[RMDB]
RNA sequence: GGGAACGACUCGAGUAGAGUCGAAAAGAUAUGGAUCCCUAGGGAGAAGGUAGUCGGAAACGACUACCCUUCGAAGAACUAGCGGAUCCUAAGUCAAAGCGAUAGUUACGUUCGCGUAACUAUCGCAUCUACCAAAUCCCUUCGGGGAUUUGGUAGAAAAAGAAACAACAACAACAAC
Reactivity to DMS in 0.01 (KOAc 150mM, MgCl2 10mM, bicine 150mM(pH8.5), 24C), signal-to-noise 1, nucleotides 027 to 126: g000a000u000a010u020g000g000a010u010c000c000c020u000a010g010g020g030a000g010a050a020g010g010u010a000g000u010c020g050g000a000a010a000c000g000a050c000u000a000c280c060c080u000u000c000g000a140a200g000a200a180c010u000a000g010c200g010g010a000u000c000c000u000a000a030g000u000c000a130a200a180g020c000g030a000u020a010g000u000u000a000c000g000u000u010c220g010c030g040u000a010a010c000u000a000u000c000g020c000a010
This 177-nucleotide RNA was probed chemically with DMS.
Source: RMDB library TTRDES, as collected in RNAgym.
Reactivities are given for positions 27 through 126.
Reactivities are rounded to 0.1 and cut off at 0 and 3.
Conditions: 150 mM KOAc, 10 mM MgCl2 and 150 mM bicine (pH 8.5), 24 C.